Structure probing data (2A3 and DMS) for a 177-nucleotide construct. For DMS, 2,552 sequencing reads were counted. The data come from the RNA Mapping Database (RMDB), library TTRDEL. For 2A3 the reverse transcriptase was SuperScript II with manganese. The 2A3 profile rests on 5,144 reads. Values cover nucleotides 27 to 126. For DMS the reverse transcriptase was MarathonRT.

RNA sequence: GGGAACGACUCGAGUAGAGUCGAAAAGAUAUGGAGAAUUGACAUGAAGCAUCUCGGAAACGAGAUGACUUCAACAGCAAUCUCCUAAGUCAAAACACUAGAAGUGUGUUCGCACACUUCUAGUGAACUGCAUCAUUAGGUUCGCCUAAUGAUGCAGAAAAGAAACAACAACAACAAC
Reactivity to 2A3 in 0.01 (KOAc 150mM, MgCl2 10mM, bicine 150mM(pH8.5), 24C), signal-to-noise 2, nucleotides 027 to 126: g010a040u070a050u140g010g010a040g050a200a300u030u000g040a070c100a160u060g000a000a000g000c010a010u000c010u010c010g000g030a110a090a050c000g010a010g010a020u010g010a010c000u010u000c000a000a000c010a000g030c000a000a020u000c020u000c000c000u020a160a020g030u050c040a020a020a080a120c000a000c000u010a010g000a000a000g000u010g000u010g020u070u130c300g080c050a000c000a000c000u000u000c000u020a000g000u000g000a020a000
Reactivity to DMS in 0.01 (KOAc 150mM, MgCl2 10mM, bicine 150mM(pH8.5), 24C), signal-to-noise 3, nucleotides 027 to 126: g000a010u000a300u000g000g000a020g010a040a050u010u000g000a080c080a200u000g020a010a010g000c000a020u010c000u000c010g010g000a070a070a210c000g010a010g000a010u000g000a040c010u000u000c000a010a090c290a130g000c000a000a000u000c000u000c000c000u000a050a080g010u000c050a060a050a080a270c010a000c000u000a000g000a010a000g010u000g030u000g030u000u020c280g000c000a000c010a000c000u000u000c010u000a010g010u000g000a000a110